[RMDB]
RNA sequence: GGGAACGACUCGAGUAGAGUCGAAAAGAGCGUCGAGAGACGAAGAGAAGUGCACCGAUCAGCAAUGGAGAACGUAAUGGUGCACAAGAGUAAGUCAGUGAAACGUUCUCUGGGCACUGGAGGCAGAAUAGUAGGAUGCUUUCGAGCAUCCUACUAUAAAAGAAACAACAACAACAAC
Reactivity to DMS in 0.01 (KOAc 150mM, MgCl2 10mM, bicine 150mM(pH8.5), 24C), signal-to-noise 4, nucleotides 027 to 126: g010a080g010c000g020u000c000g000a270g010a190g000a030c010g010a080a080g000a160g010a130a080g000u000g000c010a020c010c000g010a140u060c130a110g030c180a100a090u020g000g000a020g000a010a020c020g020u010a080a070u040g000g020u000g000c010a000c020a030a060g010a090g000u020a070a080g010u050c050a080g010u010g000a080a110a030c010g000u000u010c010u000c010u000g000g000g010c050a080c050u010g000g000a090g040g000c070a080g000a070
Reactivity to 2A3 in 0.01 (KOAc 150mM, MgCl2 10mM, bicine 150mM(pH8.5), 24C), signal-to-noise 2, nucleotides 027 to 126: g080a010g050c010g000u000c030g000a040g010a000g000a090c050g010a060a000g080a000g030a270a040g000u000g000c000a000c020c000g030a180u130c070a020g120c030a060a140u210g020g000a030g000a010a000c000g010u050a100a040u200g000g000u010g000c000a000c000a010a000g070a010g070u230a110a030g040u080c080a030g030u060g180a110a040a030c000g000u000u000c000u000c000u010g020g010g000c060a010c060u030g010g050a030g050g000c020a000g060a150
The record gives the reactivity of an RNA of 177 nucleotides to DMS and 2A3. Reactivities are given for positions 27 through 126. As a SHAPE reagent, 2A3 marks flexible, mostly unpaired nucleotides at the ribose 2'-OH. 2A3 adducts were read by reverse transcription with SuperScript II with manganese.